RNA sequence: GGGAACGACUCGAGUAGAGUCGAAAAGCACGUCGUUACGACGACGUGCAAGAAAACAAAAGGAGUGGCGAGCUGCGGCCACAGUGAAUCAAACGCAGCAAAAGCAUGGUGGUACGCCACCAUGCAAAUAAAAUUUAGCUUUCGAGCUAAAUUUUAUAAAAGAAACAACAACAACAAC
Reactivity to 2A3 in 0.01 (KOAc 150mM, MgCl2 10mM, bicine 150mM(pH8.5), 24C), signal-to-noise 5, nucleotides 027 to 126: g020c000a010c010g000u000c000g020u030u080a070c300g030a010c000g010a000c010g110u000g020c000a010a000g010a010a050a010a010c120a040a110a030a030g240g030a180g020u010g000g010c010g020a060g010c020u000g000c000g000g000c000c020a000c020a010g090u100g070a020a020u120c050a070a020a010c010g000c000a000g000c020a000a070a000a000g000c000a000u000g000g010u010g010g030u030a040c240g050c040c010a000c000c000a000u000g010c010a000a000
Reactivity to DMS in 0.01 (KOAc 150mM, MgCl2 10mM, bicine 150mM(pH8.5), 24C), signal-to-noise 3, nucleotides 027 to 126: g000c000a000c000g030u000c000g000u010u020a180c240g020a080c000g010a000c000g030u000g070c000a040a060g010a150a050a150a130c130a090a110a130a230g000g000a160g030u000g000g000c020g000a090g010c000u000g010c000g000g010c000c020a020c020a080g010u000g000a120a090u060c090a000a010a100c020g020c020a000g000c010a030a050a060a130g000c000a010u000g030g020u010g000g000u000a070c300g030c030c000a000c000c000a000u000g000c000a010a030